[RMDB]
Structure probing data (DMS and 2A3) for a 207-nucleotide construct.
It was measured as part of the RMDB library M2RFPK.
RNA sequence: GGGAACGACUCGAGUAGAGUCGAAAAACGAGUCCGUACGCGGACUCGAAGGGCCCCAGAAGACCAAGGGGCCCAAACCUACCACUCAUUAGAUGUAUGGAAAUCACUAGGUGAUACGUCACCUAGAACACGCUUUUAAGCUUCGGCUUAAAAGCAACAAUUACUUUACGUUCGCGUAAAGUAAUUGAAAAGAAACAACAACAACAAC
Reactivity to DMS in 0.01 (KOAc 150mM, MgCl2 10mM, bicine 150mM(pH8.5), 24C), signal-to-noise 2, nucleotides 027 to 156: a070c000g000a030g020u000c000c030g030u010a120c180g080c020g020g010a020c030u000c000g030a030a090g000g030g040c000c020c010c000a170g000a110a160g000a200c130c090a120a200g000g010g070g040c000c000c000a000a000a070c040c040u010a150c020c040a050c060u020c060a090u000u000a100g020a090u000g020u000a090u000g010g000a070a070a130u010c030a240c010u010a020g020g040u010g000a040u000a080c270g060u010c000a000c000c000u000a000g000a030a080c120a120c130g000c010u000u000u000u000a020a030g000c000u010u010c300g050g050c000u020u000a000a020a000a030g010c020a000a010
Reactivity to 2A3 in 0.01 (KOAc 150mM, MgCl2 10mM, bicine 150mM(pH8.5), 24C), signal-to-noise 4, nucleotides 027 to 156: a010c000g000a000g000u000c010c000g000u030a010c260g010c030g070g010a000c000u000c000g000a000a010g000g000g000c010c000c010c000a120g080a300a050g080a160c090c090a110a100g010g010g000g000c000c000c020a010a000a010c010c000u030a030c000c030a080c030u050c020a070u100u210a070g030a070u120g040u090a070u140g050g090a060a080a110u190c050a050c070u000a000g000g000u020g000a010u010a080c180g080u020c010a000c000c000u010a000g000a010a000c050a010c070g000c000u010u000u000u000a000a000g000c000u010u070c100g090g000c010u000u010a000a000a000a000g000c000a000a010